[RMDB]
RNA sequence: GGGAACGACUCGAGUAGAGUCGAAAAGGCGCAAUCGCCAGCACGGCAUCCAGCAUGGCUGCUACCUUGUCCGGCGUGCCGCGCCCGAUCGUGUCGCCAAGGCUCACCUCAUGACAGCCGAGCGAGACACGGUCGAUGCUUUCGAGCAUCGACCGUGAAAAGAAACAACAACAACAAC
Reactivity to DMS in 0.01 (KOAc 150mM, MgCl2 10mM, bicine 150mM(pH8.5), 24C), signal-to-noise 3, nucleotides 027 to 126: g010g000c020g010c040a100a080u010c010g000c010c000a130g000c010a040c180g000g010c030a030u000c120c010a010g030c070a230u020g020g010c050u010g000c140u000a080c020c010u000u020g000u010c030c090g010g020c040g000u000g030c220c180g010c030g000c010c000c010g000a060u000c050g010u000g020u000c010g030c020c050a140a300g010g010c030u000c060a130c150c070u000c170a100u000g020a100c260a040g000c000c000g000a210g010c090g000a050g000a150
Reactivity to 2A3 in 0.01 (KOAc 150mM, MgCl2 10mM, bicine 150mM(pH8.5), 24C), signal-to-noise 2, nucleotides 027 to 126: g000g000c010g020c020a010a020u010c000g030c010c030a020g020c010a010c030g000g080c000a020u060c020c000a080g110c100a290u240g100g000c020u030g000c000u070a070c000c050u080u080g070u080c080c130g000g010c030g000u020g050c060c090g010c010g000c000c000c000g000a050u100c050g010u040g010u030c000g020c040c020a060a070g010g000c020u000c060a090c030c050u180c040a170u190g060a090c060a040g000c010c000g010a020g050c050g000a020g000a010